[RMDB]
RNA sequence: GGGAACGACUCGAGUAGAGUCGAAAAACAGAAAAAAGGAGUUUAAAUUAGAUUUGCAAACGGACGGUACUAAAUACCGUCACUUUUACGUCUAACUUAUCGUUAACUCUGCACAAAGAAAACAAGAAAAACAAGCGUGAGUUCGCUCACGCUUGAACAUUAAAAGGUACUUCGGUACCUUUUAAUGAAAAGAAACAACAACAACAAC
Reactivity to 2A3 in 0.01 (KOAc 150mM, MgCl2 10mM, bicine 150mM(pH8.5), 24C), signal-to-noise 4, nucleotides 027 to 156: a010c010a010g140a040a100a000a030a000a060g040g010a050g010u080u090u100a040a070a040u020u040a010g040a050u050u050u170g050c050a040a030a010c060g020g000a000c000g000g000u010a010c060u240a090a100a120u040a010c010c000g000u000c000a040c000u000u000u020u030a010c010g010u000c010u010a030a020c020u060u040a030u170c030g110u020u020a020a030c000u010c010u060g000c030a060c070a100a070a020g100a020a080a040a010c060a050a060g090a100a080a030a010a010c000a000a000g000c020g010u000g000a010g010u050u100c150g040c070u000c000a000c010g000c000u000u000g000a000a000
Reactivity to DMS in 0.01 (KOAc 150mM, MgCl2 10mM, bicine 150mM(pH8.5), 24C), signal-to-noise 3, nucleotides 027 to 156: a050c080a110g000a050a040a040a100a110a180g000g010a020g020u000u010u010a000a030a010u000u000a030g010a000u010u010u020g080c010a020a020a010c160g000g020a010c010g010g030u010a020c050u010a100a050a300u000a000c010c020g020u020c000a000c030u000u000u010u000a010c000g000u000c000u000a010a030c010u000u000a060u000c140g000u000u000a020a030c030u010c020u000g040c090a120c090a050a080a130g000a040a030a050a100c040a060a090g000a110a050a100a080a110c000a010a030g020c000g010u000g000a040g010u000u000c300g040c030u000c000a000c000g030c010u000u000g000a010a070
An RNA of 207 nucleotides, treated with 2A3 and DMS and read out base by base. DMS adducts were read by reverse transcription with MarathonRT. The reactions ran in a buffer of 150 mM KOAc, 10 mM MgCl2 and 150 mM bicine (pH 8.5), at 24 C. Values cover nucleotides 27 to 156.